[RMDB]
Structure probing data (DMS) for a 177-nucleotide construct. DMS (dimethyl sulfate) methylates the pairing face of unpaired adenines and cytosines. Conditions: 150 mM KOAc, 10 mM MgCl2 and 150 mM bicine (pH 8.5), 24 C. The DMS profile rests on 979 reads. DMS adducts were read by reverse transcription with MarathonRT.
RNA sequence: GGGAACGACUCGAGUAGAGUCGAAAAAACAAACCGGGAGCGACGAUCCCGUCGACACCGGCAAACGCUGAGGGCCGGCACGGACCCUUCUUCCCGCAAUGUGGCGGCGUCAGCGAUCAGACGGUGAUGCGCUAUUAUCUUUCGAGAUAAUAGCGCAAAAAGAAACAACAACAACAAC
Reactivity to DMS in 0.01 (KOAc 150mM, MgCl2 10mM, bicine 150mM(pH8.5), 24C), signal-to-noise 1, nucleotides 027 to 126: a110a030c140a050a080a110c130c050g000g000g030a040g000c010g010a060c070g000a120u000c030c020c000g010u010c040g000a290c020a050c010c000g000g030c060a100a060a100c020g000c020u000g000a030g010g030g020c010c000g000g000c040a010c000g020g010a180c080c040c050u020u020c120u000u000c010c010c000g000c220a090a120u000g000u000g000g000c020g010g000c020g000u010c020a020g020c010g000a090u000c080a170g010a050c000g010g000u000g010a130